RNA sequence: GGGAACGACUCGAGUAGAGUCGAAAACCGUAGGUGCCUAAAGACGCUUGGAUUUACAAUUCGAGAUGUGUUCGAAAGAGCACAUCGAGAAUUGUUGUCAGCGUCGAUUGGGCACCUAAACGGAAAACUCUUGGGAACGUUCGCGUUCCCAAGAGAACGUAUAGCCCUACUUCGGUAGGGCUAUACGAAAAGAAACAACAACAACAAC
Reactivity to DMS in 0.01 (KOAc 150mM, MgCl2 10mM, bicine 150mM(pH8.5), 24C), signal-to-noise 1, nucleotides 027 to 156: c000c010g010u000a000g020g010u000g040c020c000u000a010a070a300g010a010c000g020c000u000u000g110g050a080u000u000u010a030c010a050a000u000u000c010g000a300g000a020u010g000u030g040u010u010c000g000a160a090a300g010a050g020c000a020c000a010u000c000g000a300g010a000a010u000u000g010u000u000g000u010c000a050g000c010g020u000c020g010a080u000u000g020g010g010c000a010c000c000u000a000a010a060c000g020g080a110a100a080a020c000u000c010u000u040g000g040g000a020a000c010g060u000u000c300g050c040g030u000u000c000c000c000a000a010g000a010g030a010a000
Reactivity to 2A3 in 0.01 (KOAc 150mM, MgCl2 10mM, bicine 150mM(pH8.5), 24C), signal-to-noise 2, nucleotides 027 to 156: c010c000g000u000a020g020g010u010g010c010c000u010a040a040a000g000a000c000g040c030u110u280g170g010a110u300u230u110a020c000a000a000u000u000c000g000a000g000a070u010g000u000g000u000u000c010g050a030a080a100g000a020g000c000a000c000a010u000c000g000a000g000a000a000u000u000g000u010u020g000u020c000a000g000c000g000u000c000g000a000u010u030g000g010g020c000a000c000c000u000a000a000a000c000g030g020a050a110a030a070c010u020c000u010u010g000g000g020a020a010c010g020u070u020c280g040c010g130u000u000c030c000c000a000a000g000a000g000a000a000
Description:
An RNA of 207 nucleotides, treated with DMS and 2A3 and read out base by base. Conditions: 150 mM KOAc, 10 mM MgCl2 and 150 mM bicine (pH 8.5), 24 C. DMS adducts were read by reverse transcription with MarathonRT. The 2A3 profile rests on 2,315 reads.